[RMDB]
RNA sequence: GGGAACGACUCGAGUAGAGUCGAAAAUGACUAGUUCGCUAGUCAAAAAACCGUAGGCACGAAGAACGAUCUAAGACAGAAUACCACUUCGAAAGAGGUGUGUAUUCAAUGACGGAUCGGGAGUGCCUAAACGGAAAAAGCGUACUUCGGUACGCAAGUAGUCUACACGAUUCGUCGUGUAGACUACAAAAGAAACAACAACAACAAC
Reactivity to DMS in 0.01 (KOAc 150mM, MgCl2 10mM, bicine 150mM(pH8.5), 24C), signal-to-noise 3, nucleotides 027 to 156: u010g010a030c000u000a000g010u000u000c300g080c020u000a000g000u010c000a000a040a080a060a070a080c010c010g050u000a080g010g030c020a010c030g000a180a130g020a210a170c020g020a030u000c010u000a060a190g020a180c030a080g010a020a010u000a010c000c000a030c000u010u000c000g020a200a170a190g000a000g030g020u000g000u000g010u000a000u000u000c000a070a050u020g000a110c180g020g000a020u000c000g000g000g020a190g030u000g000c000c000u000a000a010a050c070g060g000a040a070a080a070a160g000c010g030u000a020c000u010u000c300g070g030u000a010c000g040c010a010a030
Reactivity to 2A3 in 0.01 (KOAc 150mM, MgCl2 10mM, bicine 150mM(pH8.5), 24C), signal-to-noise 4, nucleotides 027 to 156: u080g000a000c000u000a010g030u070u050c170g050c100u010a020g000u040c040a070a060a000a000a090a020c010c000g020u020a010g000g010c000a000c030g050a270a050g020a070a000c000g010a010u000c020u050a080a070g110a100c050a060g120a070a040u040a000c000c040a000c000u020u010c020g070a120a040a030g040a040g000g020u010g020u010g000u000a000u010u000c000a000a010u040g010a010c060g000g010a000u000c010g010g000g000a030g000u000g000c000c000u010a000a000a000c000g040g080a120a110a010a010a000g000c000g000u000a000c010u020u100c300g090g000u000a010c000g000c010a020a000